[RMDB]
RNA sequence: GGGAACGACUCGAGUAGAGUCGAAAACGAAUAAUUUCCGAAGCAUACGCACCUACAUUUAAUGAUAAACCAAUAAUAGCAGCCACUACAGGUGCCAAUGUCCAUUGGUUGUCAGCGUCAUUUGUUAGCAAACAAGACAAUUCGUUGUCUUGUUUGCAAAAGAAACAACAACAACAAC
Reactivity to 2A3 in 0.01 (KOAc 150mM, MgCl2 10mM, bicine 150mM(pH8.5), 24C), signal-to-noise 2, nucleotides 027 to 126: c020g060a030a080u080a110a060u160u010u000c040c030g060a040a010g000c010a020u050a140c010g020c030a040c020c030u110a040c020a160u080u170u270a140a090u060g030a040u020a040a070a030c010c020a000a010u120a110a040u070a050g000c030a030g130c000c040a050c030u250a080c000a040g050g000u000g000c000c010a080a020u050g050u000c040c020a010u020u010g000g000u030u020g060u030c020a020g030c070g040u040c080a080u080u050u140g080u020u030a000
Reactivity to DMS in 0.01 (KOAc 150mM, MgCl2 10mM, bicine 150mM(pH8.5), 24C), signal-to-noise 2, nucleotides 027 to 126: c190g000a100a080u000a040a110u000u000u000c020c000g020a130a160g010c070a050u010a080c110g020c090a070c090c020u000a070c090a080u020u000u020a080a120u000g020a030u000a030a040a060c070c040a050a050u010a060a090u000a110g000c070a100g010c080c040a060c110u000a070c150a090g000g010u010g030c050c090a010a020u000g000u000c170c100a020u000u000g020g010u000u020g010u000c020a080g000c110g010u000c080a050u010u000u000g000u010u000a100